Chemical mapping of a 177-nucleotide RNA with 2A3 and DMS. For DMS the reverse transcriptase was MarathonRT. Values cover nucleotides 27 to 126. 2A3 adducts were read by reverse transcription with SuperScript II with manganese. The reactions ran in a buffer of 150 mM KOAc, 10 mM MgCl2 and 150 mM bicine (pH 8.5), at 24 C.

[RMDB]
RNA sequence: GGGAACGACUCGAGUAGAGUCGAAAACGAGGUUGUGCCGGGUACGGGCGUAAUUGGCUCCAGGGUUGCCGAGGCCGACCACGAGCAACGGCUCGGCCAUGUCGCAAGCCGUCUACUCGGACUCGCCGACUCGGUAUCCGUUCGCGGAUACCGAGUCAAAAGAAACAACAACAACAAC
Reactivity to 2A3 in 0.01 (KOAc 150mM, MgCl2 10mM, bicine 150mM(pH8.5), 24C), signal-to-noise 1, nucleotides 027 to 126: c000g030a010g030g040u160u170g030u210g040c000c010g030g070g020u050a070c080g050g020g010c030g020u040a040a080u100u140g060g000c000u090c070c090a060g020g100g050u010u050g050c020c000g010a060g030g020c030c000g020a090c060c060a030c070g150a130g060c020a020a060c070g100g000c100u010c000g000g000c020c000a060u060g060u030c000g000c030a060a030g220c000c000g040u000c030u020a000c000u000c010g060g010a050c000u000c000g010c000c070
Reactivity to DMS in 0.01 (KOAc 150mM, MgCl2 10mM, bicine 150mM(pH8.5), 24C), signal-to-noise 1, nucleotides 027 to 126: c090g000a060g020g020u010u000g020u000g090c010c010g000g020g000u000a050c150g010g010g000c030g060u010a100a060u020u010g040g000c010u030c050c220a160g000g010g000u000u010g010c000c020g000a160g010g000c060c060g000a080c030c020a130c030g000a210g030c210a060a080c080g000g000c140u000c070g000g030c020c000a020u010g000u000c100g040c030a070a070g000c010c000g000u010c090u010a050c020u000c000g000g020a110c010u000c030g000c050c020